Notes
This 177-nucleotide RNA was probed chemically with 2A3 and DMS. High DMS reactivity at an A or C suggests that its Watson-Crick edge is free.
RNA sequence: GGGAACGACUCGAGUAGAGUCGAAAACCUGGUUGACCAGACUUUAGAGGUCGCUGUUCUGAGCUUAACGUCUGUUUUAACUGAAACGCCGCAUUCUACACUACAACGCUAAGGCGAGGAAAUGUUCUUUGAAUUAACCGUUCGCGGUUAAUUCAAAAAAAGAAACAACAACAACAAC
Reactivity to 2A3 in 0.01 (KOAc 150mM, MgCl2 10mM, bicine 150mM(pH8.5), 24C), signal-to-noise 3, nucleotides 027 to 126: c000c000u020g050g010u070u180g010a030c000c000a010g010a060c040u150u110u160a100g020a070g120g000u040c010g000c040u080g040u140u040c010u060g040a020g010c010u030u040a070a010c030g000u020c010u030g070u050u040u020u100a040a040c030u040g070a030a060a020c020g030c020c000g000c030a000u060u040c020u050a050c030a010c070u090a040c040a110a000c030g010c010u060a090a010g080g000c010g020a030g020g080a040a140a020u150g030u070u060c010
Reactivity to DMS in 0.01 (KOAc 150mM, MgCl2 10mM, bicine 150mM(pH8.5), 24C), signal-to-noise 3, nucleotides 027 to 126: c010c000u010g040g000u010u000g030a110c140c040a090g000a130c040u000u020u010a130g030a110g010g000u000c050g010c110u020g020u020u030c030u000g030a120g010c020u020u000a040a100c060g010u000c050u000g000u000u040u010u010a060a090c080u020g000a090a090a130c070g000c060c040g000c050a090u000u000c030u000a050c080a080c050u000a030c160a090a060c080g020c070u010a110a100g010g010c010g020a150g020g000a030a060a070u010g010u010u000c060
The RNA was probed in 150 mM KOAc, 10 mM MgCl2 and 150 mM bicine (pH 8.5) at 24 C.